[RMDB]
RNA sequence: GGGAACGACUCGAGUAGAGUCGAAAAGUGGCGGCCGCCGUGGACAGAGCGGCGAAGUCAAAGGCGAGCGCGCCGCCCUCACCCUCGCGCACGCAGCGCGGCAGGUUGACGCUGGCCAGGUUGCACACGCCGUGGGCGUCGGGGCUCGCGCGCUGCAGACGCGUUCUACAUUCGUGUAGAACGCGUCAAAAGAAACAACAACAACAAC
Reactivity to 2A3 in 0.01 (KOAc 150mM, MgCl2 10mM, bicine 150mM(pH8.5), 24C), signal-to-noise 1, nucleotides 027 to 156: g090u090g030g020c070g100g000c020c030g010c000c020g020u090g000g040a140c090a110g040a000g080c020g000g000c030g000a050a000g070u130c060a110a000a130g120g000c060g040a040g000c000g000c020g000c000c000g000c000c000c000u020c050a120c000c000c010u040c000g040c030g010c060a070c090g050c020a030g030c130g030c000g100g000c030a030g010g020u150u120g060a020c140g040c140u120g060g110c030c000a070g040g000u070u110g060c050a110c020a010c140g030c000c050g050u130g030g040g000c050g030u100c080g040g000g000g000c000u010c070g060c000g010c000g000c010u010g000c010a010